[RMDB]
Chemical mapping of a 207-nucleotide RNA with 2A3. The RNA was probed in 150 mM KOAc, 10 mM MgCl2 and 150 mM bicine (pH 8.5) at 24 C. The data come from the RNA Mapping Database (RMDB), library M2RFPK.
RNA sequence: GGGAACGACUCGAGUAGAGUCGAAAAACAGUCAGUACGCUGACUGAGGGAAACGGGAGCCGGGCUUGGGACAAGAGCCAUCCCAAGUCCAAGGCCAAGUAAGCUCUAGUGAUGGUACGCCAUCACAAAAACUGGUCUACCUUCGGGUAGACCAGAACAUAAUGCGGCACUUCGGUGCCGCAUUAUGAAAAGAAACAACAACAACAAC
Reactivity to 2A3 in 0.01 (KOAc 150mM, MgCl2 10mM, bicine 150mM(pH8.5), 24C), signal-to-noise 1, nucleotides 027 to 156: a020c000a000g000u000c010a000g020u090a050c170g010c120u000g010a000c010u020g020a060g050g010g000a090a020a000c040g120g080g000a070g030c000c000g000g010g000c010u000u000g000g000g000a020c060a170a100g030a010g140c030c030a040u000c010c010c000a000a000g000u020c010c000a050a000g000g000c000c000a040a010g020u050a070a000g030c000u010c030u100a010g000u000g000a000u000g000g040u080a070c300g080c000c000a000u020c000a000c000a010a070a000a000a000c000u000g000g000u000c000u000a000c000c000u070u170c300g080g000g020u000a000g000a000c000c000a000g000a000a000